[RMDB]
RNA sequence: GGGAACGACUCGAGUAGAGUCGAAAAAAGCGCCGCGCAAGUUCAGGGCCAGGUCCCCAUUCAGAAGCAAAGGAGUCGUAGACAUAGAUAACAAGCGACGGCGCGUCCGUCCGACUGCGACUACAGCUCAGUAUCAGCUCUUCGGAGCUGAUACUGAAAAAGAAACAACAACAACAAC
Reactivity to DMS in 0.01 (KOAc 150mM, MgCl2 10mM, bicine 150mM(pH8.5), 24C), signal-to-noise 2, nucleotides 027 to 126: a090a130g000c130g000c010c000g000c040g050c030a110a080g030u000u030c090a070g010g000g000c000c070a020g010g000u020c000c000c000c100a140u010u010c110a000g030a230a060g000c120a100a050a130g010g010a000g000u010c010g010u000a000g050a120c040a110u050a110g020a190u020a040a040c200a060a120g000c020g000a100c000g000g010c000g000c160g000u020c000c000g030u000c030c030g000a080c040u000g000c010g000a010c000u000a030c030a130g010c030
Reactivity to 2A3 in 0.01 (KOAc 150mM, MgCl2 10mM, bicine 150mM(pH8.5), 24C), signal-to-noise 3, nucleotides 027 to 126: a020a000g140c070g000c000c010g070c000g060c060a000a040g010u170u140c050a060g030g000g060c000c040a050g020g060u110c020c000c030c020a020u130u080c040a060g180a160a010g010c040a090a060a080g080g040a020g000u010c000g010u020a000g030a070c030a070u130a040g140a050u180a260a030c130a190a010g030c050g130a100c000g030g000c030g000c000g030u010c000c000g000u010c000c000g020a060c000u030g040c050g000a000c000u070a060c050a000g010c000

The record gives the reactivity of an RNA of 177 nucleotides to DMS and 2A3. 2A3 adducts were read by reverse transcription with SuperScript II with manganese. The DMS profile rests on 2,287 reads. Conditions: 150 mM KOAc, 10 mM MgCl2 and 150 mM bicine (pH 8.5), 24 C.